[RMDB]
This 177-nucleotide RNA was probed chemically with 2A3 and DMS.
Conditions: 150 mM KOAc, 10 mM MgCl2 and 150 mM bicine (pH 8.5), 24 C.
DMS (dimethyl sulfate) methylates the pairing face of unpaired adenines and cytosines.
RNA sequence: GGGAACGACUCGAGUAGAGUCGAAAAACCUGUAAACUUCUUGUUUCUUGUGGUUCCAGUCCAAGAAACGUCCAGCAACUUUGUUGGUUGUAUAGUCGAAGGUGCUUGAGUCAUUGGCAUGUGAGACUGUAUUGCCGUAUUUCGAUACGGCAAUACAAAAAGAAACAACAACAACAAC
Reactivity to 2A3 in 0.01 (KOAc 150mM, MgCl2 10mM, bicine 150mM(pH8.5), 24C), signal-to-noise 2, nucleotides 027 to 126: a000c000c000u010g130u110a060a060a090c090u140u080c020u000u020g000u020u030u000c000u000u010g020u080g070g050u170u070c040c000a040g060u000c030c010a000a000g030a000a080a080c040g050u000c000c000a000g000c000a010a120c080u030u090u060g080u050u020g030g000u030u130g050u090a180u100a080g010u000c000g030a040a010g080g020u060g020c000u040u110g060a020g030u010c030a070u060u100g000g180c060a000u140g070u010g300a090g000a060c000
Reactivity to DMS in 0.01 (KOAc 150mM, MgCl2 10mM, bicine 150mM(pH8.5), 24C), signal-to-noise 2, nucleotides 027 to 126: a040c040c010u000g030u050a080a070a050c090u030u000c140u000u000g010u000u000u000c000u000u000g020u030g000g010u010u000c060c050a160g000u020c020c020a070a050g000a020a010a010c050g000u010c050c010a040g040c050a040a100c150u020u020u010g010u000u000g040g000u000u000g010u000a040u010a040g010u000c000g000a130a010g000g030u000g010c000u000u010g000a120g000u050c150a140u020u000g000g000c010a020u000g020u000g000a300g000a050c040